[RMDB]
RNA sequence: GGGAACGACUCGAGUAGAGUCGAAAAUGACCGAGGUCCUGGAUUGGUUGGCGGUGGCUAGCGGUCCUGCGGGCAUCGCGAUCGGUAUCUACGGCGAGAAGUGGCGCUCCCGGCGACGGGAGCCUGCCGAGAUCGAGAAGACCGAGGCGGAGGCCUCGGUAAUGCAUCCGUUCGCGGAUGCAUUACCAAAAGAAACAACAACAACAAC
Reactivity to DMS in 0.01 (KOAc 150mM, MgCl2 10mM, bicine 150mM(pH8.5), 24C), signal-to-noise 3, nucleotides 027 to 156: u000g010a090c030c020g010a070g050g020u010c010c000u000g020g000a100u000u010g030g020u010u000g020g030c030g040g040u000g020g020c020u000a050g050c020g020g020u010c080c060u000g020c040g010g020g000c030a070u000c020g020c010g010a060u000c010g020g030u000a110u000c030u000a120c040g010g020c060g010a120g010a120a100g010u010g010g010c080g030c000u000c000c000c000g030g000c300g000a260c010g030g000g010a040g020c010c010u000g040c010c000g000a120g000a060u010c020g010a150g000a130a120g000a100c010c010g000a070g010g020c040g040g000a200g030g000c010c000u010c010
Reactivity to 2A3 in 0.01 (KOAc 150mM, MgCl2 10mM, bicine 150mM(pH8.5), 24C), signal-to-noise 3, nucleotides 027 to 156: u100g030a020c000c010g010a010g030g010u040c010c020u050g110g040a100u050u080g030g020u040u040g080g000c020g010g030u050g030g100c030u050a120g020c040g060g140u180c030c100u190g010c030g020g010g050c010a010u020c010g020c020g070a100u000c000g000g020u050a040u030c010u120a210c000g020g020c050g020a060g050a140a080g090u140g060g040c090g010c020u000c000c010c010g010g000c060g010a050c000g000g000g000a000g000c010c030u030g000c000c000g010a010g000a060u020c010g000a000g000a140a030g010a020c010c000g000a010g010g030c020g020g010a060g010g030c000c000u000c020